[RMDB]
RNA sequence: GGGAACGACUCGAGUAGAGUCGAAAACGACUUCACCCGUCUCGGGAAAAAUCAGUGGGUUGUCGGUCACCGAGGCGAACUCAACGGCCAGCACACGCUCGGCCUGCGCUAGCGCGUCCCACGUCGCCGGUGUGUAAUUAUUCGUAAUUACACACCGAAAAGAAACAACAACAACAAC
Reactivity to DMS in 0.01 (KOAc 150mM, MgCl2 10mM, bicine 150mM(pH8.5), 24C), signal-to-noise 7, nucleotides 027 to 126: c080g010a060c050u000u000c100a100c040c040c020g020u000c030u010c040g010g020g010a020a050a080a100a070u010c130a080g020u000g010g010g010u000u000g010u010c040g010g010u010c080a150c030c030g010a050g010g010c020g000a070a090c110u000c070a070a270c160g010g000c000c010a040g000c010a140c210a110c190g000c010u000c130g040g010c010c020u010g000c270g000c160u010a070g000c060g000c030g000u000c010c000c000a070c070g000u010c120g000c170
Reactivity to 2A3 in 0.01 (KOAc 150mM, MgCl2 10mM, bicine 150mM(pH8.5), 24C), signal-to-noise 6, nucleotides 027 to 126: c020g060a040c030u090u060c110a140c060c020c000g030u020c020u020c020g020g020g030a050a070a020a040a050u190c090a080g030u040g020g040g000u080u120g150u150c050g040g060u090c040a040c110c020g010a010g010g000c010g010a090a060c040u040c090a050a020c040g000g000c000c010a010g010c020a050c030a020c170g010c010u060c100g010g000c000c000u010g000c030g010c040u080a050g040c020g000c000g050u020c000c020c000a030c020g110u100c030g050c070